Notes: An RNA of 177 nucleotides, treated with 2A3 and DMS and read out base by base. 2A3 adducts were read by reverse transcription with SuperScript II with manganese. For 2A3, 7,056 sequencing reads were counted. DMS adducts were read by reverse transcription with MarathonRT.
[RMDB]
RNA sequence: GGGAACGACUCGAGUAGAGUCGAAAAUCGUCGUCAUCCUUGGCUAACCGCUCAAGUUCCUCCUCUUCCUCUCGGCUGAGGUGCUUCCCUCCCGCGGCCAGCUGCUUCUUCUUGUUCUCCAGGGCCUAUCUCCUAUUUAGUUCGCUAAAUAGGAGAUAAAAGAAACAACAACAACAAC
Reactivity to 2A3 in 0.01 (KOAc 150mM, MgCl2 10mM, bicine 150mM(pH8.5), 24C), signal-to-noise 3, nucleotides 027 to 126: u050c010g040u000c000g020u010c010a050u040c030c010u040u030g020g010c020u040a060a090c040c030g020c030u040c090a080a060g020u050u030c000c000u020c000c000u000c000u030u010c010c010u010c010u020c020g050g000c030u030g030a020g050g000u040g020c010u040u040c000c000c010u020c010c000c010g020c000g020g000c000c000a010g000c020u030g000c000u030u030c000u050u020c000u060u100g020u060u000c020u000c010c010a010g000g040g040c000c010u010
Reactivity to DMS in 0.01 (KOAc 150mM, MgCl2 10mM, bicine 150mM(pH8.5), 24C), signal-to-noise 6, nucleotides 027 to 126: u000c080g010u000c040g020u010c050a080u010c040c020u000u010g010g000c060u000a090a120c110c080g010c040u000c070a080a110g010u000u000c020c000u000c030c020u010c030u000u000c020c020u000c060u000c100g000g010c050u000g010a090g010g020u000g010c080u000u000c020c010c010u000c030c020c020g020c100g010g000c010c020a080g020c060u000g010c040u000u000c030u000u000c040u000u000g010u000u000c020u000c010c040a090g000g000g010c100c060u000